[RMDB]
RNA sequence: GGGAACGACUCGAGUAGAGUCGAAAACGGGAGCGGCAGCGCUCAGCGGCAGAUCGGCAACCGCGCCGUCCAGCGAGGGAAGCAUCUGGCUAGUGGCCAGUCCUUCCGGCGUAAUAAUUUGCGGUUCGCUUGACUUAAGCUUCGGCUUAAGUCAAGCAAAAGAAACAACAACAACAAC
Reactivity to DMS in 0.01 (KOAc 150mM, MgCl2 10mM, bicine 150mM(pH8.5), 24C), signal-to-noise 2, nucleotides 027 to 126: c060g000g000g010a030g010c000g000g020c270a130g010c060g020c050u000c020a080g000c030g000g050c090a110g000a090u060c040g000g000c000a090a020c000c030g010c000g020c030c020g000u000c080c110a150g000c000g000a090g010g000g020a000a000g010c110a060u060c010u000g000g000c010u010a130g020u030g000g020c000c020a000g030u000c300c000u000u000c020c000g030g010c020g020u060a070a040u010a020a080u000u020u000g000c020g000g000u000u020c160
Reactivity to 2A3 in 0.01 (KOAc 150mM, MgCl2 10mM, bicine 150mM(pH8.5), 24C), signal-to-noise 3, nucleotides 027 to 126: c020g010g030g000a030g020c010g080g000c110a070g110c080g000c020u000c010a020g070c000g030g010c040a040g010a120u130c040g030g010c040a050a010c010c000g000c000g020c000c000g030u000c000c020a010g000c000g030a040g070g000g010a000a030g030c030a070u110c030u000g020g000c020u040a040g120u150g290g000c000c000a000g010u000c010c000u000u000c010c000g080g000c000g030u020a040a050u090a080a040u110u100u230g000c000g010g000u050u080c040